[RMDB]
RNA sequence: GGGAACGACUCGAGUAGAGUCGAAAAACUGCAUCUACGGAUGCAGAACUACGUUCAUCCAAUUUAUUUGGACGCAUGAAAUGAGAAUAGGGAACGGGAUUCUCAUACGCAGGCAACGGCCUGCGAAAAAACUCCUUAUGCUUCGGCAUAAGGAGAAGAUUCUCUGCAAGUUCGCUUGCAGAGAAUCAAAAGAAACAACAACAACAAC
Reactivity to 2A3 in 0.01 (KOAc 150mM, MgCl2 10mM, bicine 150mM(pH8.5), 24C), signal-to-noise 2, nucleotides 027 to 156: a010c000u000g000c000a000u000c010u030a050c130g120g000a010u000g000c010a000g000a000a000c030u060a010c000g040u040u000c000a030u040c010c000a040a010u050u210u170a190u100u160u000g000g000a000c010g000c010a020u180g090a150a050a050u010g000a000g010a010a010u010a020g080g020g010a010a010c010g000g000g020a000u000u000c000u000c000a000u010a020c010g000c000a020g030g000c000a200a140c200g280g020c000c000u000g000c010g020a020a000a000a000a000a000c000u020c000c000u000u000a000u000g000c000u000u020c090g070g000c000a000u000a000a000g040g010a000g000a000a000
Description:
Chemical mapping of a 207-nucleotide RNA with 2A3. Source: RMDB library M2RFOK, as collected in RNAgym. For 2A3, 910 sequencing reads were counted. 2A3 adducts were read by reverse transcription with SuperScript II with manganese. Reactivities are given for positions 27 through 156.